[RMDB]
RNA sequence: GGGAACGACUCGAGUAGAGUCGAAAAUCGACUAGCCGUAGUGGCGAAGAACGACCUGUUAGGGUGCCGCAGAGACCCACUAUUAGGCUAGUAUAAAAAUCUCUGCGGAAUAUAGACAGAACAUUAAAAUCGUCACCUAUUUCGAUAGGUGACGAUUAAAAGAAACAACAACAACAAC
Reactivity to DMS in 0.01 (KOAc 150mM, MgCl2 10mM, bicine 150mM(pH8.5), 24C), signal-to-noise 2, nucleotides 027 to 126: u040c000g000a090c000u020a000g000c000c010g000u000a010g020u000g000g010c300g010a170a120g000a080a060c300g000a080c000c070u000g000u000u040a030g020g020g010u020g000c040c010g020c020a030g000a000g000a120c300c000c000a070c000u000a000u000u090a160g000g000c000u000a000g000u000a000u010a000a020a010a040a040u020c070u010c060u000g010c050g000g000a070a050u000a150u010a200g000a130c190a100g000a060a040c240a060u030u030a040a070